[RMDB]
RNA sequence: GGGAACGACUCGAGUAGAGUCGAAAAGGGCAGCGACAUGGUCGAACAGGGUCGGCCCGAUGAAGAAGCCGCCCUCCAGGUUCGCAUCGCCUUCAGGCAGCCCAAAGGUCAGGUCGUCGCUGGCGCGAGUCUAACACUUGUUCGCAAGUGUUAGACUAAAAGAAACAACAACAACAAC
Reactivity to 2A3 in 0.01 (KOAc 150mM, MgCl2 10mM, bicine 150mM(pH8.5), 24C), signal-to-noise 4, nucleotides 027 to 126: g030g020g000c020a020g010c020g010a010c000a050u090g020g030u140c070g050a080a030c080a080g040g000g100u250c050g020g000c000c020c020g000a110u180g070a040a170g050a040a010g020c010c000g010c010c000c000u000c010c010a030g020g010u120u070c020g000c020a050u110c070g030c010c000u020u030c010a020g030g030c020a030g050c030c000c000a030a090a000g040g000u050c020a010g020g050u060c040g010u030c020g020c080u050g020g000c050g000c020g100
Reactivity to DMS in 0.01 (KOAc 150mM, MgCl2 10mM, bicine 150mM(pH8.5), 24C), signal-to-noise 5, nucleotides 027 to 126: g010g010g020c000a110g010c000g010a020c030a120u000g000g030u010c130g010a110a130c190a070g010g010g020u010c030g040g010c000c040c050g000a120u010g010a130a160g000a180a190g010c010c020g000c010c000c000u000c040c060a090g010g010u020u000c030g010c030a070u000c120g010c020c010u000u000c110a120g010g030c070a130g010c000c020c020a060a110a080g000g010u000c040a040g010g000u000c090g010u000c050g020c020u000g010g000c060g020c170g000
Notes
The record gives the reactivity of an RNA of 177 nucleotides to 2A3 and DMS. Reactivities are given for positions 27 through 126. For 2A3 the reverse transcriptase was SuperScript II with manganese. For DMS the reverse transcriptase was MarathonRT.